RNA sequence: GGGAACGACUCGAGUAGAGUCGAAAAUCGUUGCGGCUCCGUCCGUACGGGUUCCACUCCGUAGGACAUGAGUGUCUGACCUAUCCGCAAAGGUGAAUGUGUCAUAUUUCGCAGAUCCUCGUAGGUAAAUAGAAUUCCUCUUCGGGGGAAUUCUAUUAAAAGAAACAACAACAACAAC
Reactivity to 2A3 in 0.01 (KOAc 150mM, MgCl2 10mM, bicine 150mM(pH8.5), 24C), signal-to-noise 5, nucleotides 027 to 126: u050c020g020u040u100g000c010g010g010c020u030c070c050g020u000c000c020g050u020a010c010g000g000g020u190u140c060c020a050c050u010c000c010g020u030a010g000g000a010c010a060u140g010a030g040u070g070u010c040u020g030a030c010c010u030a070u040c000c010g020c110a170a090a030g080g010u080g050a180a140u110g090u020g000u080c030a040u070a110u220u160u090c030g000c020a020g010a090u030c000c020u030c030g080u060a050g070g030u070a040
Reactivity to DMS in 0.01 (KOAc 150mM, MgCl2 10mM, bicine 150mM(pH8.5), 24C), signal-to-noise 9, nucleotides 027 to 126: u010c080g020u010u010g020c020g010g010c030u000c050c300g010u000c000c020g020u010a010c000g010g010g000u000u000c140c170a110c160u010c010c010g020u010a080g010g000a020c040a070u000g000a050g010u000g010u010c070u000g010a070c020c020u000a110u000c020c020g010c090a060a080a110g010g010u000g000a100a090u000g010u000g010u010c110a070u000a110u000u010u010c040g020c030a060g000a100u000c020c000u000c120g010u000a080g000g010u010a060